[RMDB]
RNA sequence: GGGAACGACUCGAGUAGAGUCGAAAAACUUGACGUCCAUCGCGUAGCGUGACGAUAACUUCCACAACAUUGCAAUUGGGUCCUGGCAGAUUCACCUUCACGGUUUUAAUGCGGGCAUGGGAAAUUCCCUUAGCAACGUUAGCGCAUUCACAGUGUACUCUAGCACUCUAUUCGUAGAGUGCUAGAGAAAAGAAACAACAACAACAAC
Reactivity to 2A3 in 0.01 (KOAc 150mM, MgCl2 10mM, bicine 150mM(pH8.5), 24C), signal-to-noise 5, nucleotides 027 to 156: a010c040u060u100g090a030c030g020u010c050c020a100u120c050g020c050g130u130a060g010c010g030u030g050a030c030g010a030u060a090a040c030u060u020c030c020a060c020a080a050c030a100u050u130g030c020a050a160u110u090g050g000g010u070c010c010u010g080g000c000a010g020a090u060u080c040a050c040c000u110u190c100a050c110g000g040u020u050u070u110a040a030u050g010c000g000g040g000c010a000u030g010g000g100a050a100a110u170u140c000c000c040u040u060a010g030c020a010a040c070g020u060u070a010g030c010g000c000a070u110u110c060a080c030a100g020u060g050u160a050
Reactivity to DMS in 0.01 (KOAc 150mM, MgCl2 10mM, bicine 150mM(pH8.5), 24C), signal-to-noise 2, nucleotides 027 to 156: a050c040u000u000g020a110c080g000u000c040c080a110u000c030g010c030g000u010a120g040c020g060u000g030a040c050g010a150u010a040a040c070u000u010c010c010a120c090a080a090c050a060u010u000g010c070a120a110u000u000g000g030g020u010c020c030u000g040g000c060a050g010a140u000u020c060a010c000c010u000u000c010a090c040g020g020u010u010u000u000a080a080u000g020c050g020g010g020c040a050u010g030g020g000a030a070a150u000u000c010c010c010u000u000a140g040c030a030a020c030g020u000u000a050g030c020g020c030a120u010u040c060a060c020a060g020u000g000u010a210